[RMDB]
RNA sequence: GGGAACGACUCGAGUAGAGUCGAAAAUCAGUAUCAGAAGCCAGCCUAGAAUGCAGGUGUCUUGAUUGUGAUCUUAAAGUUGCUUCCAUACUCAGAUCAACUACUACUAAAUAUGUUAGAACAUUUACUGUAUACAAAGGCCUAGGCAUAUGUCUAGCCCAAACCAAAUUUUCGAAUUUGGUUUGGGAAAAGAAACAACAACAACAAC
Reactivity to DMS in 0.01 (KOAc 150mM, MgCl2 10mM, bicine 150mM(pH8.5), 24C), signal-to-noise 1, nucleotides 027 to 156: u000c020a090g020u000a090u000c010a100g000a100a140g010c000c000a100g040c010c020u070a080g000a060a130u010g010c020a060g050g000u010g020u000c020u000u030g000a150u010u000g020u010g030a040u000c060u000u000a070a070a150g020u010u010g030c040u010u010c060c010a030u000a070c030u000c090a070g000a080u000c050a060a110c090u010a070c080u000a140c060u000a050a040a070u010a060u020g000u010u020a080g010a140a090c030a090u000u010u000a050c060u010g010u010a080u010a160c070a090a190a130g030g040c000c040u020a040g020g000c000a100u010a040u010g030u010c030u000a130g000
Reactivity to 2A3 in 0.01 (KOAc 150mM, MgCl2 10mM, bicine 150mM(pH8.5), 24C), signal-to-noise 3, nucleotides 027 to 156: u080c010a020g090u090a010u150c030a020g020a150a000g000c010c040a000g000c000c000u040a040g050a140a020u070g000c020a000g010g010u020g040u060c040u040u180g080a150u170u090g020u030g050a020u040c010u030u070a120a090a080g030u050u060g060c060u080u030c040c030a050u060a140c010u030c090a010g000a040u030c020a090a020c010u080a000c000u020a020c040u070a050a070a090u240a090u230g070u110u080a090g010a080a000c000a000u030u070u160a100c040u020g060u030a030u030a090c030a000a140a010g000g000c000c020u070a070g010g030c000a020u060a010u100g020u000c030u020a040g020
The data come from the RNA Mapping Database (RMDB), library OK3TST. An RNA of 207 nucleotides, treated with DMS and 2A3 and read out base by base. For DMS the reverse transcriptase was MarathonRT. 2A3 adducts were read by reverse transcription with SuperScript II with manganese. The RNA was probed in 150 mM KOAc, 10 mM MgCl2 and 150 mM bicine (pH 8.5) at 24 C.